[RMDB]
RNA sequence: GGGAACGACUCGAGUAGAGUCGAAAAGAUAUGGACCAUACGAAGGAAUGUUCAGGCUUGGAUUUAUACAGGAUCGGAAACGAUCCUGUAUUGUCAGCCUGACAUUACUCAGUAUGGUCCUAAGUCAGUAUAGUAAGCCGUUCGCGGCUUACUAUACAAAAGAAACAACAACAACAAC
Reactivity to DMS in 0.01 (KOAc 150mM, MgCl2 10mM, bicine 150mM(pH8.5), 24C), signal-to-noise 1, nucleotides 027 to 126: g030a080u020a300u010g000g000a040c000c000a000u000a000c010g000a300a050g000g000a010a000u010g000u000u010c000a020g010g010c020u020u000g040g000a030u000u020u000a020u000a000c000a000g000g000a020u010c010g000g000a130a080a200c000g010a020u000c010c000u000g000u000a000u000u000g000u000c010a030g000c000c000u010g000a000c000a000u010u000a060c000u000c130a300g000u000a010u000g000g010u010c000c000u000a000a020g000u010c070a200
Reactivity to 2A3 in 0.01 (KOAc 150mM, MgCl2 10mM, bicine 150mM(pH8.5), 24C), signal-to-noise 2, nucleotides 027 to 126: g090a000u130a050u180g030g000a010c000c000a000u000a000c010g120a080a040g000g050a000a010u030g050u300u190c000a000g010g000c000u260u300g190g020a080u300u300u090a030u030a010c010a000g020g010a000u010c010g000g060a100a120a010c020g000a020u000c000c000u010g000u000a000u000u000g020u030c020a020g000c000c000u000g000a000c000a000u000u000a030c010u000c020a010g000u010a000u020g000g000u000c000c000u000a000a010g020u000c030a000